Structure probing data (DMS and 2A3) for a 207-nucleotide construct. The reactions ran in a buffer of 150 mM KOAc, 10 mM MgCl2 and 150 mM bicine (pH 8.5), at 24 C. The DMS profile rests on 1,336 reads. Values cover nucleotides 27 to 156. DMS adducts were read by reverse transcription with MarathonRT. The 2A3 profile rests on 1,755 reads.
RNA sequence: GGGAACGACUCGAGUAGAGUCGAAAAGAUCUGCGCCGAUCCGAAACGCUAGCAAACAGCCCGCAUCAUGUCGUCUCCUAACUUCGACGUGGUGAAAUACUGAGCUUAUGCGAGUAAGCCUGUUAGCAAUAGAUCAGAACGUUCGCGUUCUGAUCAAGAUUAGGCUCUUCUUCGGAAGAGCCUAAUCAAAAGAAACAACAACAACAAC
Reactivity to DMS in 0.01 (KOAc 150mM, MgCl2 10mM, bicine 150mM(pH8.5), 24C), signal-to-noise 1, nucleotides 027 to 156: g030a050u000c000u000g030c050g020c050c120g000a010u000c050c070g000a080a080a170c170g030c000u000a060g050c000a090a110a160c120a150g030c040c000c000g040c010a020u000c010a070u010g040u000c000g000u000c110u000c150c080u000a100a080c080u020u000c000g040a160c000g050u000g050g110u000g000a020a080a140u010a010c060u000g020a130g000c010u010u000a130u020g020c300g000a200g010u020a050a040g060c000c030u000g000u010u000a080g000c160a040a200u000a130g020a030u020c000a000g000a000a040c000g000u020u000c300g030c010g050u000u000c000u000g000a000u000c010a010a090
Reactivity to 2A3 in 0.01 (KOAc 150mM, MgCl2 10mM, bicine 150mM(pH8.5), 24C), signal-to-noise 3, nucleotides 027 to 156: g020a040u030c000u100g050c070g030c060c010g030a050u000c030c040g060a070a060a000c030g010c020u020a000g000c040a070a050a130c030a070g030c020c000c010g000c010a010u010c000a000u020g000u000c000g010u030c040u110c080c090u120a150a170c020u070u050c020g000a000c010g000u000g020g000u010g020a040a010a000u220a040c050u020g000a030g030c000u030u030a010u070g050c040g010a020g040u020a050a000g010c030c050u100g010u050u030a010g010c030a050a070u060a180g000a000u000c000a000g000a010a010c010g000u060u050c160g000c000g130u000u000c030u000g010a000u000c010a000a000